[RMDB]
RNA sequence: GGGAACGACUCGAGUAGAGUCGAAAAGAUGGGCCGCCGAACGGGCCGCCAUAGCUAUACGGCGGCGGUGGCGGGCCGGGUGGAUAGGUGUAGCCGCCCGACUGCGAGCCGCCGAGUUCGGAGGCGCCUGUGAUACCCCAUUCGUGGGGUAUCACAGAAAAGAAACAACAACAACAAC
Reactivity to DMS in 0.01 (KOAc 150mM, MgCl2 10mM, bicine 150mM(pH8.5), 24C), signal-to-noise 2, nucleotides 027 to 126: g000a080u000g000g010g010c020c010g000c020c000g010a010a000c010g010g000g010c000c000g020c000c020a080u010a110g000c230u060a120u030a060c140g020g000c000g010g010c030g000g050u010g000g010c010g000g010g030c040c000g020g010g030u000g000g010a090u030a040g040g010u020g010u020a130g000c000c000g000c010c000c000g000a020c020u010g000c080g020a200g010c000c000g040c000c010g000a060g000u000u000c010g000g000a110g000g000c000g010c040
Reactivity to 2A3 in 0.01 (KOAc 150mM, MgCl2 10mM, bicine 150mM(pH8.5), 24C), signal-to-noise 5, nucleotides 027 to 126: g120a060u080g020g090g000c000c010g000c000c000g010a000a020c010g020g120g020c010c010g010c010c010a110u150a090g140c080u230a060u070a280c110g000g000c000g000g000c000g000g000u020g010g010c000g000g020g000c000c000g000g000g010u020g010g070a160u140a300g100g140u230g110u180a030g050c000c000g000c020c000c000g000a040c040u200g060c060g110a050g010c000c000g000c010c020g010a020g000u000u010c000g010g010a010g000g020c000g170c000